[RMDB]
RNA sequence: GGGAACGACUCGAGUAGAGUCGAAAAGCACGAGUGUGCUUAGACUCGUGCGGGCUCAGUUAGUGCAAACUGAGCCGGAUCUAGUUUAAGCACACUGGAUCGCGUAGAGUUUGCACUAACUCUGCGAGCACAGCAUUCUAUUCGUAGAAUGCUGUGCAAAAGAAACAACAACAACAAC
Reactivity to DMS in 0.01 (KOAc 150mM, MgCl2 10mM, bicine 150mM(pH8.5), 24C), signal-to-noise 2, nucleotides 027 to 126: g020c030a120c090g020a010g010u010g010u000g010c070u010u010a020g010a010c000u000c250g040u000g010c070g010g010g010c000u010c010a010g000u000u000a040g010u000g000c040a020a030a010c000u000g010a040g000c020c010g000g000a050u000c160u000a010g000u000u000u010a030a040g010c040a040c060a010c020u000g000g010a060u000c090g000c030g000u000a030g000a010g010u000u000u000g000c060a030c030u000a020a010c000u000c010u000g000c000g010a100
Reactivity to 2A3 in 0.01 (KOAc 150mM, MgCl2 10mM, bicine 150mM(pH8.5), 24C), signal-to-noise 2, nucleotides 027 to 126: g070c080a030c140g110a020g000u010g000u020g000c010u030u020a030g020a000c010u020c080g000u080g110c040g000g020g000c020u030c020a010g010u000u020a060g050u070g170c080a050a040a000c010u010g000a000g010c000c000g000g010a010u000c040u050a010g000u010u000u030a040a020g000c020a000c000a000c000u000g000g020a110u070c070g000c000g140u010a010g000a000g040u020u030u070g060c030a030c070u010a010a000c000u020c000u020g020c020g010a010

Chemical mapping of a 177-nucleotide RNA with DMS and 2A3. For DMS, 3,578 sequencing reads were counted. Conditions: 150 mM KOAc, 10 mM MgCl2 and 150 mM bicine (pH 8.5), 24 C.